[RMDB]
RNA sequence: GGGAACGACUCGAGUAGAGUCGAAAAUGGGCGGUCUUGCGGCCGUUAACGGUCUUGUCGUACAAACGGAUUCGUCACCAUCGAGCGAUGCUGAGCUGAUUCAGUUGGCUUCGGAGUUCGAGGGUCAUGAUCGUAUACGAUUCGUCGUAUACGAUCAAAAAGAAACAACAACAACAAC
Reactivity to 2A3 in 0.01 (KOAc 150mM, MgCl2 10mM, bicine 150mM(pH8.5), 24C), signal-to-noise 5, nucleotides 027 to 126: u080g020g030g000c020g010g000u040c040u080u230g070c170g010g010c000c010g030u010u050a060a030c020g020g000u000c020u080u260g040u050c040g060u100a080c070a060a110a010c030g030g030a050u190u220c020g050u040c040a010c020c010a030u030c000g010a000g010c030g050a070u140g030c030u090g010a020g020c020u020g030a100u110u080c030a080g130u040u020g040g000c010u060u050c040g000g000a070g020u010u010c000g010a030g000g040g000u030c040a100
Reactivity to DMS in 0.01 (KOAc 150mM, MgCl2 10mM, bicine 150mM(pH8.5), 24C), signal-to-noise 6, nucleotides 027 to 126: u010g020g020g010c020g010g010u000c010u010u020g010c240g000g020c000c010g020u000u030a050a070c060g020g010u000c030u000u000g030u000c040g010u000a100c190a080a100a070c060g000g010a080u000u010c050g010u000c110a090c020c010a050u000c020g000a060g010c010g010a110u000g010c230u000g000a030g010c040u000g010a050u000u010c130a100g010u010u010g010g010c020u000u000c060g010g000a220g020u010u000c010g010a050g000g010g010u000c110a100
Record summary: Structure probing data (2A3 and DMS) for a 177-nucleotide construct. The 2A3 profile rests on 6,209 reads. Reactivities are rounded to 0.1 and cut off at 0 and 3. For DMS the reverse transcriptase was MarathonRT. The data come from the RNA Mapping Database (RMDB), library OK2TRN. The reactions ran in a buffer of 150 mM KOAc, 10 mM MgCl2 and 150 mM bicine (pH 8.5), at 24 C.